[RMDB]
This 177-nucleotide RNA was probed chemically with DMS and 2A3. The RNA was probed in 150 mM KOAc, 10 mM MgCl2 and 150 mM bicine (pH 8.5) at 24 C. It was measured as part of the RMDB library OK2TRN. The 2A3 profile rests on 1,911 reads. For 2A3 the reverse transcriptase was SuperScript II with manganese.
RNA sequence: GGGAACGACUCGAGUAGAGUCGAAAACUGGGUAUGACUCUUUAACACAUACACACUGCAUGCCUCCAGGCAGACUGAUGGAUUCCUUUCCCUGCAGUGAAGGGUUAAGUAUUAUCACACGUCACAGAUGAGUGUCAAAGUUCGCUUUGACACUCAUAAAAGAAACAACAACAACAAC
Reactivity to DMS in 0.01 (KOAc 150mM, MgCl2 10mM, bicine 150mM(pH8.5), 24C), signal-to-noise 3, nucleotides 027 to 126: c070u000g020g010g010u010a060u000g010a060c100u000c040u010u010u000a060a040c120a080c040a070u000a080c080a170c040a060c010u000g000c040a060u010g000c030c000u000c080c070a090g000g010c080a040g020a070c100u000g020a090u010g010g000a120u010u000c040c030u000u000u000c010c010c010u010g010c120a060g000u010g030a040a050g010g010g010u000u010a000a050g010u010a050u000u000a080u000c050a080c080a080c110g020u000c020a040c170a120g000
Reactivity to 2A3 in 0.01 (KOAc 150mM, MgCl2 10mM, bicine 150mM(pH8.5), 24C), signal-to-noise 2, nucleotides 027 to 126: c020u040g010g030g040u070a040u130g090a060c020u050c040u090u130u140a150a030c090a020c010a050u150a070c050a010c000a000c070u020g000c000a060u080g030c030c000u000c060c010a000g000g000c010a010g040a050c020u050g070a130u130g020g050a040u060u070c010c000u020u040u070c000c000c020u010g040c020a040g010u020g130a050a040g030g000g000u040u040a100a030g020u020a050u140u080a080u070c020a000c020a000c160g090u080c010a030c020a050g130